[RMDB]
RNA sequence: GGGAACGACUCGAGUAGAGUCGAAAAGAGCGGCAGAGGGACUGGCCCGAUGAAGCCCGGCAACCUAACUUUAUUUAAGCGUAAAGUGAUGGUGCUAAUUCCAGCAAAAUGGUGUAUUCCGUUUUGGUUUAUCCGCCCUGGUUCGCCAGGGCGGAAAGAUUACCAUACCCUUCGGGGUAUGGUAAUCAAAAGAAACAACAACAACAAC
Reactivity to DMS in 0.01 (KOAc 150mM, MgCl2 10mM, bicine 150mM(pH8.5), 24C), signal-to-noise 2, nucleotides 027 to 156: g000a140g000c060g040g030c040a080g000a180g000g010g010a170c050u000g050g010c030c000c040g020a090u010g000a120a170g010c020c020c000g000g030c040a090a090c000c000u000a190a010c000u000u000u000a000u000u010u000a170a190g050c210g010u000a020a020a020g010u000g000a130u000g010g020u000g000c020u000a090a160u000u010c000c000a100g000c050a050a000a070a040u010g020g030u000g030u000a190u000u000c010c010g020u000u000u010u000g010g040u000u000u000a090u000c010c000g030c000c000c010u010g020g010u000u000c270g060c000c020a020g020g010g000c010g010g010a000a000a040
Reactivity to 2A3 in 0.01 (KOAc 150mM, MgCl2 10mM, bicine 150mM(pH8.5), 24C), signal-to-noise 2, nucleotides 027 to 156: g050a000g000c190g000g010c000a000g010a030g010g020g000a010c000u000g020g030c000c000c010g060a100u000g000a000a000g010c030c000c000g010g020c020a120a140c000c000u020a010a000c000u010u020u020a040u060u150u140a220a050g150c040g030u000a000a000a000g030u020g020a090u270g010g010u000g000c000u000a040a000u150u020c000c000a000g000c010a030a000a010a040u050g020g030u040g030u150a120u150u030c000c010g000u000u010u020u060g060g020u020u180u130a040u020c000c000g020c000c030c000u000g010g010u040u050c070g010c060c000a000g000g000g020c000g000g000a000a000a000